Chemical mapping of a 177-nucleotide RNA with DMS and 2A3. The 2A3 profile rests on 1,068 reads.
[RMDB]
RNA sequence: GGGAACGACUCGAGUAGAGUCGAAAAUACUAAUCUUCGUUUAAUUUCAUUUGCGCCAAGCAAACCGAAAUUGAAAUAGUCCACGGGGUAGUGGCGGGUGGAAAUACCUCCGUUUGCUCGGCAAGGACCAUUACGUGAGCUUCGGCUCACGUAAUGGAAAAGAAACAACAACAACAAC
Reactivity to DMS in 0.01 (KOAc 150mM, MgCl2 10mM, bicine 150mM(pH8.5), 24C), signal-to-noise 2, nucleotides 027 to 126: u050a150c250u010a070a100u030c030u010u020c050g000u000u000u060a020a070u000u020u010c000a300u000u010u000g010c060g020c200c140a180a220g000c010a000a000a030c120c140g010a000a000a000u010u000g010a050a040a050u030a070g000u030c040c010a060c030g000g000g000g000u050a070g010u000g010g030c090g030g000g040u000g050g010a090a100a140u000a090c050c000u000c010c050g000u000u000u000g020c050u000c020g100g000c040a030a110g000g000a050
Reactivity to 2A3 in 0.01 (KOAc 150mM, MgCl2 10mM, bicine 150mM(pH8.5), 24C), signal-to-noise 3, nucleotides 027 to 126: u140a010c030u030a050a090u130c080u100u100c080g100u050u020u060a050a010u020u020u050c060a050u020u020u040g110c050g040c080c150a150a120g030c000a010a010a000c000c060g000a020a050a050u000u050g050a000a010a050u030a050g120u060c030c000a010c010g010g000g040g020u090a050g080u050g110g000c060g040g020g000u070g030g140a020a070a080u220a130c000c000u000c000c000g020u060u060u040g000c030u020c090g040g000c080a100a030g100g000a050
The data come from the RNA Mapping Database (RMDB), library OK1LIB. DMS (dimethyl sulfate) methylates the pairing face of unpaired adenines and cytosines. Conditions: 150 mM KOAc, 10 mM MgCl2 and 150 mM bicine (pH 8.5), 24 C. DMS adducts were read by reverse transcription with MarathonRT.